[RMDB]
RNA sequence: GGGAACGACUCGAGUAGAGUCGAAAACAGAUGUUCGCAUCUGCAGUGAGAUAUGGACGAUGGCAAGAGAGAAUCAGCAAUGACGUCGGAAACGAUAAGACAGCUGAUUAUCUUGAUGACCCAUCGUCCUAAGUCCGAAAGGCGGCUUCGGCCGCAAGAAAAAGAAUCGCUUCGGCGAUUCUUUUUCAAAAGAAACAACAACAACAAC
Reactivity to 2A3 in 0.01 (KOAc 150mM, MgCl2 10mM, bicine 150mM(pH8.5), 24C), signal-to-noise 1, nucleotides 027 to 156: c000a000g000a010u030g080u060u160c280g080c170a020u010c010u060g050c040a010g060u150g090a290g020a120u040a020u100g000g000a010c000g000a000u010g030g010c020a120a050g020a000g000a000g000a000a000u010c000a000g030c020a070a210u160g080a020c080g000u000c000g010g000a190a140a030c010g000a000u030a120a050g100a030c060a060g150c050u000g000a000u020u000a020u000c000u000u100g020a150u070g020a090c000c000c060a000u010c030g010u000c000c000u000a000a000g010u000c000c000g110a130a050a000g100g000c020g000g000c010u080u080c210g170g000c010c010g180c040a000a020

This 207-nucleotide RNA was probed chemically with 2A3. Values cover nucleotides 27 to 156. 2A3 adducts were read by reverse transcription with SuperScript II with manganese. It was measured as part of the RMDB library RNAMAK. Conditions: 150 mM KOAc, 10 mM MgCl2 and 150 mM bicine (pH 8.5), 24 C.